An RNA of 207 nucleotides, treated with 2A3 and read out base by base.
The 2A3 profile rests on 1,074 reads.
It was measured as part of the RMDB library RNAMAK.
2A3 adducts were read by reverse transcription with SuperScript II with manganese.
RNA sequence: GGGAACGACUCGAGUAGAGUCGAAAAGGGGUCCUAAAGUAACAAGACGCGACGAAGUCACAGGGAGUAAUCUGAAGCCUCCACGGAUUACGAAGAACUGUGACAGAGCGUCCGCCCUUUAGGACGGAGGCACCCAAAAGCUUAACUUCGGUUAAGCCGUGGAAAGAGACUUCGGUCUCUUUCCACGAAAAGAAACAACAACAACAAC
Reactivity to 2A3 in 0.01 (KOAc 150mM, MgCl2 10mM, bicine 150mM(pH8.5), 24C), signal-to-noise 1, nucleotides 027 to 156: g060g000g040g000u000c040c000u000a000a000a000g020u020a160a030c190a300a150g000a020c010g050c000g040a300c000g010a050a010g000u000c000a000c000a000g040g040g020a140g000u000a000a000u000c010u020g040a090a030g030c000c010u000c000c000a020c030g000g000a000u000u030a010c060g010a140a110g050a080a040c000u000g000u000g000a010c010a000g000a000g000c000g000u000c000c030g080c020c010c010u000u000u000a000g000g020a000c000g010g010a000g000g000c000a040c000c000c000a030a270a000a000g020c020u010u040a000a000c000u060u090c270g060g000u000u000a000a020g000c020